[RMDB]
Conditions: 150 mM KOAc, 10 mM MgCl2 and 150 mM bicine (pH 8.5), 24 C. Chemical mapping of a 177-nucleotide RNA with DMS and 2A3. Reactivities are given for positions 27 through 126. Reactivities are rounded to 0.1 and cut off at 0 and 3.
RNA sequence: GGGAACGACUCGAGUAGAGUCGAAAAGUGCUGGCCAUGCUGGCCUGGCUGGACGAGCACGUGGCCUUCGAGUUCGUGCUCAAGGCGGACGACGACUCCUUCGCGCGGCUGGACGCGCUGCUGGCCGCCGUGAAGCAUAAUUCGUUAUGCUUCACGGAAAAGAAACAACAACAACAAC
Reactivity to DMS in 0.01 (KOAc 150mM, MgCl2 10mM, bicine 150mM(pH8.5), 24C), signal-to-noise 9, nucleotides 027 to 126: g020u010g010c020u000g010g010c010c040a070u010g020c060u000g010g020c040c020u010g010g010c020u000g010g010a100c120g010a100g010c020a040c010g010u010g010g000c000c010u000u010c190g010a080g010u000u000c110g010u000g010c010u000c010a050a050g010g010c020g010g000a070c050g000a100c060g000a200c230u000c040c040u000u000c070g010c070g020c040g000g000c040u000g000g010a100c060g020c080g010c050u000g010c040u010g000g010c010c030g020
Reactivity to 2A3 in 0.01 (KOAc 150mM, MgCl2 10mM, bicine 150mM(pH8.5), 24C), signal-to-noise 7, nucleotides 027 to 126: g080u080g020c020u040g020g000c010c020a100u230g030c070u110g040g050c000c010u020g030g000c020u020g010g040a040c040g020a030g000c030a010c060g020u110g050g020c010c000u070u110c120g070a140g040u040u180c080g070u240g010c000u000c020a010a020g030g010c030g010g070a040c030g010a020c030g060a060c040u020c030c000u070u100c030g000c000g010c010g050g000c030u080g060g030a060c040g000c020g000c110u050g000c020u000g010g010c000c010g000